[RMDB]
RNA sequence: GGGAACGACUCGAGUAGAGUCGAAAAUAUAAAAAGCUUUGCUCACUCAAGGGAAGUCUUGCUCAUCCCCUUCUGAAAGGGGGUGAUAAAAAUGACAGCAUAUGAAACAAUCUCUUUAAUGAUUGCUGUUGCUUGGUCAAUUCGUUGACCAAGCAACAAAAGAAACAACAACAACAAC
Reactivity to 2A3 in 0.01 (KOAc 150mM, MgCl2 10mM, bicine 150mM(pH8.5), 24C), signal-to-noise 1, nucleotides 027 to 126: u250a000u100a000a020a000a060a000g040c080u020u070u120g020c010u000c030a000c000u130c070a100a000g000g010g040a070a000g070u000c060u050u030g000c030u030c000a000u030c000c010c000c000u090u090c100u190g100a120a000a000g000g000g000g020g020u000g000a000u040a000a060a100a000a000u090g030a000c000a000g010c010a030u040a000u300g100a070a000a000c050a020a010u000c050u000c000u130u080u280a140a060u170g120a070u040u000g060c070u010
The record gives the reactivity of an RNA of 177 nucleotides to 2A3. The RNA was probed in 150 mM KOAc, 10 mM MgCl2 and 150 mM bicine (pH 8.5) at 24 C. It was measured as part of the RMDB library RFM100.